Structure probing data (DMS and 2A3) for a 177-nucleotide construct. The 2A3 profile rests on 2,039 reads. It was measured as part of the RMDB library OK2TRN. DMS adducts were read by reverse transcription with MarathonRT. The DMS profile rests on 1,680 reads. For 2A3 the reverse transcriptase was SuperScript II with manganese.

RNA sequence: GGGAACGACUCGAGUAGAGUCGAAAAAAGGUGGCCGUAAACAUCCUCAGCAGGAAUUCCUGCAAGUCGACACCUCAAAAAUCCUAUUUAUCUGUGGUGGCGCGUUUGCUGGCCUAGAUAAAGUGAACGCUAAUACUCAGUUCGCUGAGUAUUAGCGAAAAGAAACAACAACAACAAC
Reactivity to DMS in 0.01 (KOAc 150mM, MgCl2 10mM, bicine 150mM(pH8.5), 24C), signal-to-noise 2, nucleotides 027 to 126: a130a030g000g020u000g000g000c090c010g040u000a040a090a100c090a230u000c090c050u020c150a130g000c030a030g000g020a300a110u010u010c000c010u000g010c020a060a080g000u000c060g010a130c020a030c010c000u020c050a030a060a060a100a070u010c060c030u010a050u000u010u000a050u030c020u000g000u010g030g020u000g000g010c030g030c260g020u000u000u010g000c000u000g010g030c000c010u000a040g000a040u000a000a030a030g000u010g010a080a120
Reactivity to 2A3 in 0.01 (KOAc 150mM, MgCl2 10mM, bicine 150mM(pH8.5), 24C), signal-to-noise 2, nucleotides 027 to 126: a000a040g050g000u040g010g000c090c010g010u050a050a080a020c010a130u110c030c020u050c070a020g000c020a010g150g000a190a300u270u200c000c010u010g000c000a000a030g040u050c000g010a010c000a010c040c010u000c020a100a160a040a010a010u010c000c020u060a130u010u060u020a050u000c020u020g120u070g100g000u020g000g000c010g000c040g140u040u120u210g010c050u120g130g060c000c010u020a000g000a010u030a010a030a050g080u100g060a100a020